[RMDB]
RNA sequence: GGGAACGACUCGAGUAGAGUCGAAAAAAAAGAUAUGGACGUGAACUACGCUGUAAAGUCUUCGUUGAAACUAAUUCGGAAACGAAUUAGUGGAGAAGAUGAAGAAGGCGCACGUCCUAAGUCAAAACAAUGGUUGAUUGUUCGCAAUCAACCAUUGAAAAGAAACAACAACAACAAC
Reactivity to DMS in 0.01 (KOAc 150mM, MgCl2 10mM, bicine 150mM(pH8.5), 24C), signal-to-noise 2, nucleotides 027 to 126: a120a040a160a100g030a030u000a300u010g040g000a020c010g050u000g000a140a110c100u020a280c060g000c010u000g060u000a030a230a300g000u000c000u010u000c000g000u000u030g000a240a160a020c000u010a000a040u010u000c010g010g000a050a030a020c000g000a000a010u000u000a000g000u000g000g000a010g000a040a010g010a000u000g000a010a070g050a180a300g010g000c000g000c020a000c000g000u000c000c000u000a010a080g000u000c010a020a060a080a170
Reactivity to 2A3 in 0.01 (KOAc 150mM, MgCl2 10mM, bicine 150mM(pH8.5), 24C), signal-to-noise 1, nucleotides 027 to 126: a000a000a000a000g080a000u060a000u070g000g000a000c030g000u010g020a150a110c080u210a060c300g030c070u110g010u030a000a010a030g010u000c070u040u000c050g250u220u040g020a010a000a000c010u010a000a000u000u010c000g020g020a030a030a040c000g000a000a010u000u000a020g000u030g000g000a060g000a000a000g000a000u010g000a070a220g030a010a000g070g000c030g000c010a010c020g020u040c000c000u000a000a000g000u000c040a030a130a030a050
An RNA of 177 nucleotides, treated with DMS and 2A3 and read out base by base.
For 2A3 the reverse transcriptase was SuperScript II with manganese.